Structure probing data (DMS and 2A3) for a 177-nucleotide construct. The reactions ran in a buffer of 150 mM KOAc, 10 mM MgCl2 and 150 mM bicine (pH 8.5), at 24 C. The DMS profile rests on 1,897 reads. It was measured as part of the RMDB library TTRDES.
[RMDB]
RNA sequence: GGGAACGACUCGAGUAGAGUCGAAAAGAUAUGGAUCAGGGUAGCUUUUGACGGCUUCCAGUCGGAAACGACUGAGAAGCCGAUAAGCUACAUUGAUCCUAAGUCAAAAGACGGGUUCGCCCGUCAACGUAUCACCUGAGUUCGCUCAGGUGAUACGAAAAGAAACAACAACAACAAC
Reactivity to DMS in 0.01 (KOAc 150mM, MgCl2 10mM, bicine 150mM(pH8.5), 24C), signal-to-noise 2, nucleotides 027 to 126: g000a050u010a300u000g010g010a020u000c010a020g000g010g010u000a000g010c000u020u000u000u010g020a170c160g010g020c000u010u000c000c000a000g000u000c000g010g000a110a070a150c010g000a020c000u000g030a200g000a010a010g000c000c000g000a020u000a010a020g030c000u000a010c000a010u020u000g010a010u000c010c010u000a010a060g000u000c020a140a140a130a190g000a000c010g010g000g000u000u010c220g040c000c000c000g020u010c020a030a110
Reactivity to 2A3 in 0.01 (KOAc 150mM, MgCl2 10mM, bicine 150mM(pH8.5), 24C), signal-to-noise 1, nucleotides 027 to 126: g030a010u090a040u180g010g000a000u020c000a000g050g080g000u010a000g000c000u070u190u170u250g300a210c040g010g000c000u000u010c000c000a030g020u000c000g010g000a100a120a030c020g030a020c060u000g100a180g010a300a010g000c010c000g000a010u010a000a000g020c010u000a000c000a000u000u000g000a000u000c000c000u000a080a000g040u010c030a120a060a100a070g000a000c010g010g000g000u040u100c300g060c100c000c000g020u000c010a010a020